About this RNA:
This 177-nucleotide RNA was probed chemically with DMS and 2A3.
[RMDB]
RNA sequence: GGGAACGACUCGAGUAGAGUCGAAAACAUUGCCGACAUCGACCCGUUGCUAGCCGACACCCACGCCUUCGAAGAACUCCGAAUGCUAAGCCUUUUGCCUUCGCGGGCAACGACAUUGAACGACGACCGUAUCGCGUGUAUUCGUACACGCGAUACGAAAAGAAACAACAACAACAAC
Reactivity to DMS in 0.01 (KOAc 150mM, MgCl2 10mM, bicine 150mM(pH8.5), 24C), signal-to-noise 2, nucleotides 027 to 126: c120a000u000u000g000c000c000g050a150c160a060u010c090g000a130c000c030c000g000u040u000g030c090u000a050g000c030c010g030a040c070a080c030c000c060a050c120g020c010c010u020u000c000g000a080a070g010a020a050c030u010c000c020g000a110a060u000g010c060u020a050a080g030c000c030u000u030u000u030g040c010c060u000u000c120g000c170g060g000g020c070a020a040c170g020a070c160a060u000u020g040a040a060c080g000a040c300g000a130c130
Reactivity to 2A3 in 0.01 (KOAc 150mM, MgCl2 10mM, bicine 150mM(pH8.5), 24C), signal-to-noise 4, nucleotides 027 to 126: c020a050u050u160g040c020c000g050a060c020a110u120c060g060a090c010c000c000g070u070u060g000c010u020a020g020c030c020g040a020c020a050c010c040c000a020c030g030c000c000u040u060c020g060a110a080g020a100a010c030u030c010c030g080a070a000u060g000c020u070a070a100g000c000c040u080u120u050u090g010c020c000u060u070c040g000c080g030g000g030c010a010a000c020g070a010c000a080u080u140g070a120a030c010g080a010c030g050a050c060

For 2A3, 2,989 sequencing reads were counted. The reactions ran in a buffer of 150 mM KOAc, 10 mM MgCl2 and 150 mM bicine (pH 8.5), at 24 C.